An RNA of 177 nucleotides, treated with DMS and read out base by base. Reactivities are given for positions 27 through 126. DMS adducts were read by reverse transcription with MarathonRT. For DMS, 511 sequencing reads were counted.
[RMDB]
RNA sequence: GGGAACGACUCGAGUAGAGUCGAAAAUUAAAGGAGGAGGAGGAGUGUGUGUCUUCCCAGCUGCUGAGUAGAACCUCCGCACACACGCGAAAGCUACGAGCAGCAGCAGUGCGGAUACGGUGAAAAACCAAAACUGCAGAUUCGUCUGCAGUUUUGGAAAAGAAACAACAACAACAAC
Reactivity to DMS in 0.01 (KOAc 150mM, MgCl2 10mM, bicine 150mM(pH8.5), 24C), signal-to-noise 1, nucleotides 027 to 126: u000u020a110a080a160g010g000a070g000g000a150g000g000a130g000g000a100g010u000g040u040g030u000g000u020c140u040u000c020c010c000a130g030c010u000g020c010u020g000a130g000u000a010g030a110a110c090c040u030c100c010g000c000a020c150a050c170a100c190g030c010g010a040a270a060g050c000u000a030c090g000a150g000c010a090g000c070a110g000c100a020g000u010g020c010g000g020a040u000a040c190g010g000u000g000a050a080a080a120a120